[RMDB]
RNA sequence: GGGAACGACUCGAGUAGAGUCGAAAAUCACCGGCAACGGAAUCGUGACGAAUUACGCCGGCGUCGAUAUCGCGUUCUCGAACAACAACCUCCUGACGGACAACGACGCGAUUCUCGUUGAUACCGAAUACUUCGGGUAUGAAGGUGAGUGGUUGCCCGUUCCAUUUUGUUUCGACAAAAUGGAACGAAAAGAAACAACAACAACAAC
Reactivity to DMS in 0.01 (KOAc 150mM, MgCl2 10mM, bicine 150mM(pH8.5), 24C), signal-to-noise 2, nucleotides 027 to 156: u000c020a080c010c020g000g000c010a050a100c050g020g020a070a030u000c000g030u020g010a260c060g010a100a180u000u010a090c030g000c020c050g030g020c140g010u000c030g000a210u000a060u010c060g040c090g010u000u000c060u010c030g000a090a080c060a100a110c050a080a080c030c000u010c020c020u000g020a070c000g020g020a110c060a060a160c020g000a160c010g010c000g020a040u000u000c010u000c010g030u000u000g010a140u010a060c000c000g000a070a140u000a040c120u010u000c050g020g030g000u000a060u010g000a100a120g020g000u000g010a110g010u010g000g000u000u000g020c000c060
Reactivity to 2A3 in 0.01 (KOAc 150mM, MgCl2 10mM, bicine 150mM(pH8.5), 24C), signal-to-noise 3, nucleotides 027 to 156: u010c000a010c010c000g040g040c030a030a000c010g000g030a000a020u010c010g020u040g050a060c060g060a150a210u110u200a080c090g010c020c010g040g060c020g050u060c030g040a080u060a060u200c080g000c040g100u130u030c090u000c050g110a110a040c100a050a020c020a040a060c080c060u090c020c050u120g060a070c040g010g020a020c010a100a010c020g040a010c010g000c010g020a000u000u000c140u030c030g000u000u020g030a050u070a100c000c000g010a040a030u140a210c080u090u070c050g030g000g050u060a060u120g100a120a040g010g000u020g030a040g000u070g010g020u040u040g060c030c000

Structure probing data (DMS and 2A3) for a 207-nucleotide construct. 2A3 adducts were read by reverse transcription with SuperScript II with manganese. High DMS reactivity at an A or C suggests that its Watson-Crick edge is free. For 2A3, 2,720 sequencing reads were counted. It was measured as part of the RMDB library OK3TST. The reactions ran in a buffer of 150 mM KOAc, 10 mM MgCl2 and 150 mM bicine (pH 8.5), at 24 C. Values cover nucleotides 27 to 156.